[RMDB]
RNA sequence: GGGAACGACUCGAGUAGAGUCGAAAACUAUUAGAUGCUUGUUCAGCAAUUGCAACUAGCUCUGGUUUAUCUGAAGAAUGACGAACAUCUUCUUGAAUUUCCUUUAAAGUUAGAUGUCCUCCUGAACGAAAGUGUAAUUGUUCGCAAUUACACUUUCAAAAGAAACAACAACAACAAC
Reactivity to 2A3 in 0.01 (KOAc 150mM, MgCl2 10mM, bicine 150mM(pH8.5), 24C), signal-to-noise 6, nucleotides 027 to 126: c010u030a070u180u160a070g030a070u180g000c020u040u060g030u070u060c030a030g000c090a190a300u230u130g020c020a030a010c010u020a010g010c000u000c030u040g030g050u050u050u060a100u060c060u080g020a040a010g070a110a130u130g050a060c080g030a070a050c010a020u000c000u030u020c000u020u010g050a110a080u060u030u080c000c000u010u080u140a090a120a030g040u060u060a030g000a050u040g030u020c000c010u010c010c000u030g040a060a020c040
Reactivity to DMS in 0.01 (KOAc 150mM, MgCl2 10mM, bicine 150mM(pH8.5), 24C), signal-to-noise 8, nucleotides 027 to 126: c030u000a080u010u020a050g020a050u010g020c010u000u000g010u010u000c080a100g010c150a200a110u010u010g010c110a060a040c020u000a030g020c010u000c020u000g000g000u000u000u000a080u000c090u000g000a080a060g000a060a070u010g010a110c140g010a090a070c060a040u000c010u000u000c010u000u000g010a090a150u000u000u000c060c050u000u010u010a150a050a060g000u000u000a030g010a060u000g010u000c040c030u000c040c040u000g010a080a120c200
The record gives the reactivity of an RNA of 177 nucleotides to 2A3 and DMS.
The RNA was probed in 150 mM KOAc, 10 mM MgCl2 and 150 mM bicine (pH 8.5) at 24 C.
Values are in units of 0.01, from 0 to 300, in steps of 10.
For 2A3 the reverse transcriptase was SuperScript II with manganese.
For DMS, 12,012 sequencing reads were counted.
It was measured as part of the RMDB library OK2TST.
DMS adducts were read by reverse transcription with MarathonRT.